[RMDB]
RNA sequence: GGGAACGACUCGAGUAGAGUCGAAAAUACGCCCACCGUCCUCUUCAAGAGCGGCGGUGGUACCUCAUUCAGUGCACUUGGGAAGGUCUGAGGAAGCCGACAAUCUCUAAGCGGGAGUCCCUCUCAACGAAUGACAUGACUUCGGUCAUGUCAUUCGAAAAGAAACAACAACAACAAC
Reactivity to 2A3 in 0.01 (KOAc 150mM, MgCl2 10mM, bicine 150mM(pH8.5), 24C), signal-to-noise 5, nucleotides 027 to 126: u100a020c050g050c000c000c000a000c000c000g010u000c000c000u050c030u290u200c270a300a050g000a000g020c090g010g000c010g010g000u010g000g010u040a050c000c000u020c010a080u090u020c060a010g040u030g110c040a040c100u120u140g030g020g040a060a050g030g000u010c030u020g040a060g020g040a060a020g040c040c010g090a040c020a050a100u050c030u000c010u060a040a050g050c020g020g010g010a010g020u020c010c000c000u030c010u020c040a050a080
Reactivity to DMS in 0.01 (KOAc 150mM, MgCl2 10mM, bicine 150mM(pH8.5), 24C), signal-to-noise 1, nucleotides 027 to 126: u010a080c150g010c140c010c000a020c000c020g010u000c000c000u000c000u000u040c300a090a170g000a000g000c150g100g030c000g000g040u000g020g020u010a000c030c000u020c090a060u010u000c020a030g010u000g000c070a040c120u060u000g030g000g010a070a090g010g000u000c030u010g000a060g020g000a070a100g010c050c040g000a120c100a060a110u060c090u000c040u010a120a100g000c040g010g000g000a300g000u000c000c030c010u010c050u030c090a010a250